Conditions: 150 mM KOAc, 10 mM MgCl2 and 150 mM bicine (pH 8.5), 24 C. Chemical mapping of a 177-nucleotide RNA with 2A3 and DMS. For DMS, 13,424 sequencing reads were counted. Values cover nucleotides 27 to 126.

[RMDB]
RNA sequence: GGGAACGACUCGAGUAGAGUCGAAAAUUUACGGUAUUCGUACCGUAAACGAGCAAGCAAGCAGCGCAACGAGACAAGACGAUAAUAAGAUCGAGCAUGGUGAUAGUAGGAUCUUCGGAUCCUACAAACAUAGAGUCUUGUUCGCAAGACUCUAUGUAAAAGAAACAACAACAACAAC
Reactivity to 2A3 in 0.01 (KOAc 150mM, MgCl2 10mM, bicine 150mM(pH8.5), 24C), signal-to-noise 5, nucleotides 027 to 126: u010u000u000a000c000g000g000u010a030u030u100c180g020u030a030c000c000g010u010a010a000a000c040g020a030g040c040a070a010g000c010a030a030g010c020a020g040c020g000c040a010a040c030g040a010g010a070c030a040a030g050a040c060g020a020u050a150a080u100a140a080g060a100u060c040g020a010g070c040a050u110g050g010u070g070a070u060a130g000u010a010g000g020a010u000c010u040u020c150g070g000a000u000c020c000u000a000c000a000a000
Reactivity to DMS in 0.01 (KOAc 150mM, MgCl2 10mM, bicine 150mM(pH8.5), 24C), signal-to-noise 8, nucleotides 027 to 126: u000u000u000a000c000g000g010u000a010u000u010c170g020u000a010c000c000g010u000a000a010a040c130g010a110g020c070a050a070g010c060a070a060g010c020a050g000c070g000c050a040a050c060g000a060g010a060c040a040a050g010a100c060g000a050u000a050a070u010a080a080g010a040u000c050g010a080g010c050a050u010g010g010u000g010a090u010a080g000u000a010g010g000a010u000c000u000u010c180g020g010a020u000c000c000u000a000c000a030a080